[RMDB]
RNA sequence: GGGAACGACUCGAGUAGAGUCGAAAACGGUGCGAGAGCUUCCGCCACGCGAGCGCCUGCGUGGCCGAGGAGUCACGGUUCAGUGCCUCAGAGGUCCAGCACCUCGUCCACGGCUUCGGUGCUCGGCGCCACGGUCGCCUUCGGUCCGAGGUGCUCCACCUCAUAGUAGAUUCGUCUACUAUGAGGUAAAAGAAACAACAACAACAAC
Reactivity to DMS in 0.01 (KOAc 150mM, MgCl2 10mM, bicine 150mM(pH8.5), 24C), signal-to-noise 1, nucleotides 027 to 156: c060g000g020u000g000c000g010a140g000a160g030c030u000u000c030c030g000c010c060a070c060g000c010g000a050g020c020g020c040c000u000g030c040g030u000g020g000c010c020g000a070g020g010a060g020u000c020a080c040g030g000u000u000c070a090g030u010g020c030c010u000c030a140g010a090g000g010u020c030c050a160g030c090a080c030c010u000c000g000u020c020c050a090c070g020g000c090u000u000c110g020g010u000g000c060u000c090g020g020c030g000c010c060a060c040g030g030u010c070g000c020c030u000u000c020g020g000u010c060c020g020a080g020g010u000g010c020u000c030c020
Reactivity to 2A3 in 0.01 (KOAc 150mM, MgCl2 10mM, bicine 150mM(pH8.5), 24C), signal-to-noise 4, nucleotides 027 to 156: c030g020g020u050g020c060g020a060g010a030g060c020u100u030c020c010g040c050c040a030c030g020c050g010a070g030c040g050c020c040u090g040c020g020u090g030g000c010c010g040a080g030g000a040g030u080c070a040c090g030g020u150u130c060a080g030u030g080c000c020u080c040a060g030a040g080g030u030c040c030a020g020c030a020c010c000u010c000g020u030c020c030a040c020g030g010c020u110u100c090g030g000u020g010c080u110c170g130g000c010g020c010c000a030c030g050g000u030c020g020c020c000u120u150c070g000g030u050c050c030g000a020g000g030u020g010c000u000c010c010